[RMDB]
RNA sequence: GGGAACGACUCGAGUAGAGUCGAAAAUAGAUUACUCAUGUAACCUACUAGAAUGAUAGUUCGUGUACUAGUCAUAAUAUCUUUAAUCCAAUCUAAGAAAUUUAAAAUUAGAUUUUUUACACUGUUAAAGUUAACAAAGGUAUUACCCGGAUACGUGGAAUAAUCGUUUUUUCGAAAACGAUUAUUCAAAAGAAACAACAACAACAAC
Reactivity to 2A3 in 0.01 (KOAc 150mM, MgCl2 10mM, bicine 150mM(pH8.5), 24C), signal-to-noise 1, nucleotides 027 to 156: u060a010g030a010u030u000a030c020u070c150a010u060g040u020a010a010c000c010u010a050c040u040a100g170a300a080u120g040a070u030a080g060u020u050c030g000u050g010u010a000c000u000a000g070u000c040a040u030a120a010u010a010u010c000u050u060u020a050a040u070c010c000a030a000u010c000u000a010a010g060a040a230a070u190u270u260a160a260a180a020u040u040a010g000a000u030u040u000u030u090u200a040c040a000c080u010g030u110u250a190a230a020g030u020u070a090a000c050a040a000a020g010g000u010a000u020u010a010c010c010c000g000g010a030u060a040c040g070u080g120